[RMDB]
RNA sequence: GGGAACGACUCGAGUAGAGUCGAAAAGAUAUGGAUACGCGAGCUCAACAGCGUGACCUCGGAAACGAGGUACACGACAUGAGCUCAUCCUAAGUCAAAGCAUCCCAAUCUUCGGAUUGGGAUGCAACCUCCAAUCCUGGUUCGCCAGGAUUGGAGGAAAAGAAACAACAACAACAAC
Reactivity to 2A3 in 0.01 (KOAc 150mM, MgCl2 10mM, bicine 150mM(pH8.5), 24C), signal-to-noise 1, nucleotides 027 to 126: g010a000u160a000u080g000g050a010u050a100c210g070c140g300a000g000c000u000c020a120a300c090a270g080c020g020u010g000a000c000c010u000c040g000g030a010a080a060c000g010a000g020g030u140a110c000a000c030g230a050c030a090u120g000a000g010c020u000c000a000u010c000c000u020a140a000g020u050c050a170a010a040g050c000a010u000c000c000c000a010a000u000c030u080u060c260g140g000a000u000u000g000g010g000a000u010g020c000a000a000
Reactivity to DMS in 0.01 (KOAc 150mM, MgCl2 10mM, bicine 150mM(pH8.5), 24C), signal-to-noise 1, nucleotides 027 to 126: g050a080u000a300u020g000g000a000u050a140c300g010c260g000a000g010c000u000c010a040a060c170a110g020c000g010u000g000a140c000c000u000c000g000g000a050a060a120c000g000a000g000g000u000a010c000a020c010g000a030c190a180u000g000a020g000c000u000c000a000u000c000c010u000a020a100g010u000c010a150a120a090g000c000a000u010c010c000c000a010a000u000c000u000u010c150g010g000a010u000u000g000g000g000a000u000g000c010a040a000